[RMDB]
Record summary:
An RNA of 177 nucleotides, treated with 2A3 and DMS and read out base by base. Conditions: 150 mM KOAc, 10 mM MgCl2 and 150 mM bicine (pH 8.5), 24 C. Values cover nucleotides 27 to 126. It was measured as part of the RMDB library OK2TRN. Values are in units of 0.01, from 0 to 300, in steps of 10. For DMS the reverse transcriptase was MarathonRT.
RNA sequence: GGGAACGACUCGAGUAGAGUCGAAAAGUGGGCAUGCUCUGUUGACCUCCGGCUAUCGCGAGCACUGCCAUCAGUUUGCUGAAGCCGUGUCGGGCCCGCAAAUCAUAAUGCGAGCCCAGUUGCGUAAAAAAUACGUCCUAUUCGUAGGACGUAUUUUAAAAGAAACAACAACAACAAC
Reactivity to 2A3 in 0.01 (KOAc 150mM, MgCl2 10mM, bicine 150mM(pH8.5), 24C), signal-to-noise 4, nucleotides 027 to 126: g120u130g020g030g020c030a020u040g000c010u050c080u120g110u140u170g040a100c000c020u090c050c030g020g020c020u080a060u240c030g010c020g050a000g020c020a010c110u040g010c020c010a070u150c020a030g070u070u170u140g050c050u090g020a040a040g010c010c020g030u020g060u090c060g000g000g000c030c020c010g000c000a050a070a020u170c060a040u070a300a010u060g010c020g010a000g000c000c000c010a020g040u080u110g000c000g040u110a050a140
Reactivity to DMS in 0.01 (KOAc 150mM, MgCl2 10mM, bicine 150mM(pH8.5), 24C), signal-to-noise 9, nucleotides 027 to 126: g030u000g010g010g020c050a080u000g000c030u000c030u010g020u000u010g010a060c040c040u000c080c040g000g010c040u010a170u000c070g010c050g000a040g000c020a050c230u000g010c050c050a100u010c070a070g000u000u010u010g030c050u010g010a100a090g010c040c020g010u000g010u000c080g010g010g000c000c010c010g010c010a020a040a120u010c250a110u010a130a130u000g000c000g010a040g000c000c000c010a040g010u000u000g010c040g010u000a000a020